[RMDB]
RNA sequence: GGGAACGACUCGAGUAGAGUCGAAAAAGAAGUCGCUCUCUCUCGCCCUUCACAUCCCUCUCGGCAUUGAGAUGACCAUAGGCCAGGGGUGAGUCCUUAAGUGGACACAGCUGAUCUAAGGCGGUGUGUAGGGGCACGGGUUUUCAACCCCCGUGACGACGCCUCAAUAGUUCGCUAUUGAGGCGUCAAAAGAAACAACAACAACAAC
Reactivity to 2A3 in 0.01 (KOAc 150mM, MgCl2 10mM, bicine 150mM(pH8.5), 24C), signal-to-noise 2, nucleotides 027 to 156: a000g110a000a000g010u050c020g010c000u000c000u000c010u010c000u000c130g050c020c010c000u040u000c010a000c000a000u010c020c010c000u040c020u010c060g020g000c020a040u090u180g030a060g050a110u160g080a130c100c020a130u160a080g080g070c000c000a000g000g040g000g000u010g020a000g000u040c010c000u300u110a210a200g300u190g040g020a000c000a000c000a070g000c020u040g020a140u090c010u130a030a050g030g010c000g000g000u000g000u020g030u040a000g000g000g000g000c000a000c030g010g000g000u000u100u090u180c060a030a120c000c010c000c000c000g040u030g010a050c060